Overview:
This 207-nucleotide RNA was probed chemically with DMS and 2A3. The data come from the RNA Mapping Database (RMDB), library OK3TST. In probing experiments dimethyl sulfate is read out at A N1 and C N3, which are open when not base-paired. Values cover nucleotides 27 to 156. Conditions: 150 mM KOAc, 10 mM MgCl2 and 150 mM bicine (pH 8.5), 24 C.
RNA sequence: GGGAACGACUCGAGUAGAGUCGAAAAGUAUAGCAUGACUGGCUAUGCGUAUACGAUGAAUCAGCCAGCAAAGAAUCCGUUGUGCGAAAGCACUUCGGUAAUGCAUAAUCGGUUCGAGUACAGCCCGGUACGAGAACCGUUGUUAGUACGGGCAAGAGGAUAGUAAUACGUUCGCGUAUUACUAUCCAAAAGAAACAACAACAACAAC
Reactivity to DMS in 0.01 (KOAc 150mM, MgCl2 10mM, bicine 150mM(pH8.5), 24C), signal-to-noise 2, nucleotides 027 to 156: g000u020a070u000a130g120c020a080u000g000a080c040u000g010g010c020u000a050u070g020c050g030u000a120u010a140c130g030a210u000g010a090a130u010c100a080g050c000c000a000g030c010a110a070a170g000a230a230u000c000c000g060u000u000g000u000g050c000g040a220a180a300g030c010a010c030u000u000c010g040g000u020a040a040u000g080c000a120u030a060a090u000c020g010g030u010u010c000g000a300g000u000a030c010a050g000c000c010c000g000g000u000a000c010g000a300g040a030a030c020c000g010u010u000g000u000u010a050g020u000a140c060g050g030g000c070a070a140g010a300
Reactivity to 2A3 in 0.01 (KOAc 150mM, MgCl2 10mM, bicine 150mM(pH8.5), 24C), signal-to-noise 2, nucleotides 027 to 156: g010u030a020u070a110g020c040a030u040g040a200c040u010g010g060c010u050a040u070g020c030g010u020a050u050a120c120g060a120u140g090a060a140u080c030a050g000c000c030a010g000c080a000a140a000g090a050a110u040c010c010g010u000u000g010u000g010c030g040a010a050a090g000c000a000c000u000u010c010g010g000u010a040a030u080g030c050a070u080a150a010u200c050g000g000u010u000c000g000a000g010u050a010c000a070g010c030c000c010g000g000u010a000c010g000a010g000a020a000c000c000g000u000u000g030u020u060a090g010u100a030c040g020g040g000c020a020a030g080a040